[RMDB]
RNA sequence: GGGAACGACUCGAGUAGAGUCGAAAAGGGAUGCGUUCCUCUACAGAUCGGGUGGUGACACCCGAUCUGUAGAGGGUAUUGCCAUCAGCUCUGACUUCCAGAUAGUAAAGCGUUGACGCUAGAAUCCCCCACGUUUCCUAUUCGUAGGAAACGUGGGAAAAGAAACAACAACAACAAC
Reactivity to DMS in 0.01 (KOAc 150mM, MgCl2 10mM, bicine 150mM(pH8.5), 24C), signal-to-noise 1, nucleotides 027 to 126: g010g040g000a020u000g020c000g000u010u000c010c010u000c000u000a010c010a020g000a010u010c010g030g010g020u000g000g000u020g030a300c000a010c000c000c000g020a000u000c010u000g000u000a010g020a050g000g000g020u020a000u020u000g030c080c110a030u000c010a080g010c030u010c050u000g010a110c100u000u000c080c050a150g000a120u010a040g010u000a050a050a110g010c040g020u000u010g010a140c090g000c000u000a160g000a130a070u010c080c070